[RMDB]
RNA sequence: GGGAACGACUCGAGUAGAGUCGAAAACCGCAUGCCCAGGUGGCCGCGAUCUUCAAGGCUACGGCGCGGAUAGGUCCGCGCUGAUCGUUUUCCUCCAACGACGCUAAGGCGUCUUUCCUUCACCCGCAAAAUCGUCUCCCGUUCGCGGGAGACGAAAUCAUUAAUAACUGUUCGCAGUUAUUAAUGAAAAAGAAACAACAACAACAAC
Reactivity to DMS in 0.01 (KOAc 150mM, MgCl2 10mM, bicine 150mM(pH8.5), 24C), signal-to-noise 2, nucleotides 027 to 156: c050c020g030c060a110u000g010c040c060c020a300g040g020u000g030g010c000c090g040c010g030a040u010c020u000u000c040a050a300g030g010c010u000a040c030g010g010c010g040c000g000g010a110u000a080g010g000u010c010c000g000c020g010c010u010g010a050u000c030g010u020u010u000u000c050c040u020c070c030a030a110c030g010a090c020g040c010u020a110a200g080g020c010g010u010c040u000u000u000c040c030u000u000c030a080c020c000c060g020c120a040a070a080a190u010c000g010u000c000u000c000c020c000g030u000u010c250g050c030g050g000g000a020g000a000c020g000a000a030a070
Reactivity to 2A3 in 0.01 (KOAc 150mM, MgCl2 10mM, bicine 150mM(pH8.5), 24C), signal-to-noise 4, nucleotides 027 to 156: c010c020g010c060a070u110g040c000c010c030a030g020g010u010g020g000c010c020g060c040g030a020u000c010u050u030c030a030a010g010g000c000u020a010c010g000g000c010g000c020g020g010a050u140a170g100g100u050c010c000g000c000g000c000u010g010a020u010c010g020u050u070u100u040c020c020u040c010c010a050a040c080g010a000c010g010c020u080a080a100g110g000c000g020u020c000u030u040u030c020c000u060u070c040a060c040c010c020g060c090a070a070a040a180u030c000g000u020c000u000c020c000c000g020u050u020c180g000c010g070g000g000a000g000a000c010g000a000a000a000
Overview
Structure probing data (DMS and 2A3) for a 207-nucleotide construct. Conditions: 150 mM KOAc, 10 mM MgCl2 and 150 mM bicine (pH 8.5), 24 C. The data come from the RNA Mapping Database (RMDB), library M2RFPK. For 2A3, 4,165 sequencing reads were counted.